The data come from the RNA Mapping Database (RMDB), library OK2TRN. The record gives the reactivity of an RNA of 177 nucleotides to DMS and 2A3. DMS adducts were read by reverse transcription with MarathonRT. The RNA was probed in 150 mM KOAc, 10 mM MgCl2 and 150 mM bicine (pH 8.5) at 24 C. Values are in units of 0.01, from 0 to 300, in steps of 10.
RNA sequence: GGGAACGACUCGAGUAGAGUCGAAAAUGAUAAAGGGGUGGCAUAUUCCGAUAUUGCUGUCAUGUAUCGUACGAACAACUCUUCUCGUGCUGUAGAAGACGUCUUUAUGCGAACCGGCAUACCGUACUCUGGGUUAGUUAUUCGUAACUAACCCAGAAAAAGAAACAACAACAACAAC
Reactivity to DMS in 0.01 (KOAc 150mM, MgCl2 10mM, bicine 150mM(pH8.5), 24C), signal-to-noise 4, nucleotides 027 to 126: u010g020a110u020a050a120a110g000g000g000g030u010g000g030c050a030u000a060u000u000c150c050g000a080u010a050u000u010g020c050u010g000u020c090a060u010g020u000a040u000c040g020u010a040c090g020a070a080c220a120a030c100u000c010u000u000c020u000c040g000u010g000c200u010g010u010a030g010a030a030g000a060c140g000u000c100u000u000u000a060u020g000c000g010a060a110c090c070g000g000c020a020u000a050c160c030g020u010a080c130
Reactivity to 2A3 in 0.01 (KOAc 150mM, MgCl2 10mM, bicine 150mM(pH8.5), 24C), signal-to-noise 2, nucleotides 027 to 126: u100g030a050u110a120a110a000g000g000g000g030u030g050g000c020a000u040a090u190u100c010c050g050a010u060a050u040u180g000c080u020g100u120c010a040u100g010u000a140u070c050g010u030a050c030g060a100a010c050a040a010c020u010c000u050u000c010u010c010g130u220g110c130u130g070u130a020g020a060a000g060a010c040g010u000c010u040u070u060a060u100g030c000g030a030a050c030c000g050g000c000a020u070a060c030c040g000u020a020c030